[RMDB]
RNA sequence: GGGAACGACUCGAGUAGAGUCGAAAAUGUAGCCUGGUUCUAUUGCAGCUUUAUUCUAGCAAGGCUGCUGGAAAAUACAAUAAUCACUGGUCCAAGAAAGAACUCUUAUACUCUAUCUAUAUGAAGACACUCAAAGGUAAUUCGUUACCUUUGAGUGAAAAGAAACAACAACAACAAC
Reactivity to DMS in 0.01 (KOAc 150mM, MgCl2 10mM, bicine 150mM(pH8.5), 24C), signal-to-noise 5, nucleotides 027 to 126: u000g000u000a100g020c040c020u010g010g010u000u000c050u010a070u010u010g010c010a010g010c040u000u010u000a080u030u010c150u000a100g010c080a060a070g000g000c030u000g010c010u010g010g000a020a030a070a080u000a070c100a060a100u010a070a080u010c070a050c050u000g010g010u000c030c030a060a090g000a110a100a120g000a060a060c060u010c050u000u010a090u020a060c080u000c030u000a080u010c050u000a060u010a080u010g000a080a080g020a190